[RMDB]
RNA sequence: GGGAACGACUCGAGUAGAGUCGAAAAGAAAAGAGCGAGCCUCCCGAUACGAGUUUGCCAGGACCUAUCAAGUUUGGAGUCAUCCGGCCCGUAGGGGAGAAUAGAACACCGGGGGGUGAUCCACCAGAGCCCCUCGACUUCGGUCGAGGGAAAAGAAACAACAACAACAAC
Reactivity to 2A3 in 0.01 (KOAc 150mM, MgCl2 10mM, bicine 150mM(pH8.5), 24C), signal-to-noise 3, nucleotides 027 to 129: g040a020a080a010a000g050a030g020c030g000a010g010c020c000u010c020c000c010g010a020u030a090c100g020a070g080u040u100u050g060c030c000a050g040g010a090c000c000u070a110u130c050a110a090g030u080u160u120g090g020a070g010u060c000a060u050c010c000g030g010c020c010c000g000u020a040g000g010g000g000a030g000a010a020u120a050g040a040a000c040a060c080c030g000g010g000g000g000g000u010g040a040u020c000c020a010c000c060a010g010a010g080c010
Reactivity to DMS in 0.01 (KOAc 150mM, MgCl2 10mM, bicine 150mM(pH8.5), 24C), signal-to-noise 5, nucleotides 027 to 129: g000a110a020a070a040g060a060g020c000g000a070g020c000c000u010c010c010c020g040a130u020a040c050g020a120g010u020u050u040g000c030c080a070g070g020a090c070c090u020a140u040c140a120a160g030u000u000u000g030g030a090g010u030c120a150u020c000c080g000g020c000c050c010g010u030a040g010g010g010g020a000g020a100a090u060a080g040a120a130c120a110c040c020g000g000g000g000g000g000u000g040a080u060c030c100a070c070c090a080g000a300g010c050
This 170-nucleotide RNA was probed chemically with 2A3 and DMS. For DMS the reverse transcriptase was MarathonRT. It was measured as part of the RMDB library 15KLIB. The RNA was probed in 150 mM KOAc, 10 mM MgCl2 and 150 mM bicine (pH 8.5) at 24 C. For 2A3, 5,168 sequencing reads were counted.